[RMDB]
RNA sequence: GGGAACGACUCGAGUAGAGUCGAAAAGCGCGGCUGGGCAGCGGCCGGCAAUAUAUGUCAUGGAUCAGCCUGGAGGACGAGGUGCGGGCGCUGCAGUUCGCUAUCGCGCAGCCCAACCUGUCCGGCCGCUCUUCCUAGGAUUCGUCCUAGGAAGAGCAAAAGAAACAACAACAACAAC
Reactivity to DMS in 0.01 (KOAc 150mM, MgCl2 10mM, bicine 150mM(pH8.5), 24C), signal-to-noise 1, nucleotides 027 to 126: g030c090g000c030g030g030c010u000g010g010g010c020a010g000c010g000g010c070c050g000g020c020a050a060u010a080u000a050u010g020u000c070a090u000g000g010a150u020c100a150g010c040c010u010g000g030a200g020g010a020c030g010a090g010g020u010g000c070g020g020g040c020g000c100u000g010c060a100g000u010u000c070g030c030u000a010u010c080g020c030g000c050a120g000c000c000c000a120a080c220c040u000g010u000c000c040g020g010c060c070
Reactivity to 2A3 in 0.01 (KOAc 150mM, MgCl2 10mM, bicine 150mM(pH8.5), 24C), signal-to-noise 1, nucleotides 027 to 126: g000c040g000c000g060g020c000u000g040g020g070c000a000g050c000g080g040c000c000g010g000c010a030a010u170a020u050a040u180g110u030c050a070u110g100g030a180u080c030a030g140c000c020u110g070g050a140g060g060a000c030g030a040g070g000u110g040c100g050g020g000c050g010c060u140g010c050a020g050u150u150c070g000c060u090a100u220c080g000c000g010c000a030g030c000c010c010a010a010c020c030u020g000u000c000c020g020g080c030c010
Chemical mapping of a 177-nucleotide RNA with DMS and 2A3.
For 2A3 the reverse transcriptase was SuperScript II with manganese.
For 2A3, 1,172 sequencing reads were counted.
It was measured as part of the RMDB library OK2TST.
The reactions ran in a buffer of 150 mM KOAc, 10 mM MgCl2 and 150 mM bicine (pH 8.5), at 24 C.
The DMS profile rests on 1,327 reads.